RNA sequence: GGGAACGACUCGAGUAGAGUCGAAAAAAUGGUAACAAUAACAGAACCUUGUGCAUUAAAGGGCACUUGAUUCCUGUACUCAAUGACUACAUGGUCUACCUUCAUGCAUUUGCCCAUGAUACGUACCCAACAGGGGGUGGUUCGCCACCCCCUGUUGAAAAGAAACAACAACAACAAC
Reactivity to DMS in 0.01 (KOAc 150mM, MgCl2 10mM, bicine 150mM(pH8.5), 24C), signal-to-noise 3, nucleotides 027 to 126: a030a040u020g000g010u000a080a070c110a060a090u080a120a060c020a050g010a080a090c070c000u000u000g020u000g010c010a010u000u030a080a150a060g010g000g010c030a010c030u010u040g020a060u000u000c070c070u000g010u000a060c130u010c160a050a070u000g000a050c060u010a060c150a050u000g000g020u020c000u000a010c040c020u000u010c100a020u000g020c070a080u010u000u000g000c040c020c020a090u010g000a030u030a040c110g020u020a020c190c070
Reactivity to 2A3 in 0.01 (KOAc 150mM, MgCl2 10mM, bicine 150mM(pH8.5), 24C), signal-to-noise 3, nucleotides 027 to 126: a000a030u220g010g010u130a180a080c100a120a040u120a100a080c040a040g030a040a030c000c000u010u060g030u010g000c000a000u130u060a100a060a080g070g000g010c050a040c000u010u040g060a050u100u040c020c000u060g020u070a030c060u040c060a080a170u070g000a050c030u060a020c070a070u220g040g000u010c030u060a040c030c000u010u030c010a030u080g090c020a050u070u080u150g040c040c010c010a040u030g010a010u040a050c040g010u000a050c000c000